An RNA of 177 nucleotides, treated with 2A3 and DMS and read out base by base. For 2A3, 6,248 sequencing reads were counted. The reactions ran in a buffer of 150 mM KOAc, 10 mM MgCl2 and 150 mM bicine (pH 8.5), at 24 C. Source: RMDB library OK2TST, as collected in RNAgym.

[RMDB]
RNA sequence: GGGAACGACUCGAGUAGAGUCGAAAACAGGCGCGGAGUGUACGAUGACGGCAUCGAGCUCAAAAUCGCCCAGCCGUCGGUGCAGUUCAGUGACAGGCAGUCGGGAGCAGAUUUGCACUUUUAUCAACUAAUUUAAUACUUUCGAGUAUUAAAUUAGAAAAGAAACAACAACAACAAC
Reactivity to 2A3 in 0.01 (KOAc 150mM, MgCl2 10mM, bicine 150mM(pH8.5), 24C), signal-to-noise 4, nucleotides 027 to 126: c030a000g070g000c000g000c040g060g020a080g040u050g020u040a030c010g050a170u180g020a020c010g030g000c000a030u080c080g030a020g010c030u050c060a100a120a030a110u130c050g000c010c010c000a010g010c000c000g010u020c020g010g010u020g000c020a020g010u060u050c010a020g010u010g120a040c020a040g040g000c020a010g020u030c030g050g010g020a030g000c030a020g020a120u090u090u120g070c030a060c050u090u140u070u110a160u190c030a030a080
Reactivity to DMS in 0.01 (KOAc 150mM, MgCl2 10mM, bicine 150mM(pH8.5), 24C), signal-to-noise 7, nucleotides 027 to 126: c100a100g000g010c040g030c090g000g010a070g020u000g010u000a040c050g020a130u020g010a060c040g010g000c010a100u010c110g000a070g010c030u010c100a090a050a100a110u010c130g020c030c020c040a120g000c020c020g020u000c020g010g020u000g000c020a050g000u000u000c070a060g010u000g010a080c070a070g000g010c040a070g010u000c060g010g000g010a090g020c050a060g000a090u000u010u000g020c060a100c070u000u000u010u010a110u010c060a070a240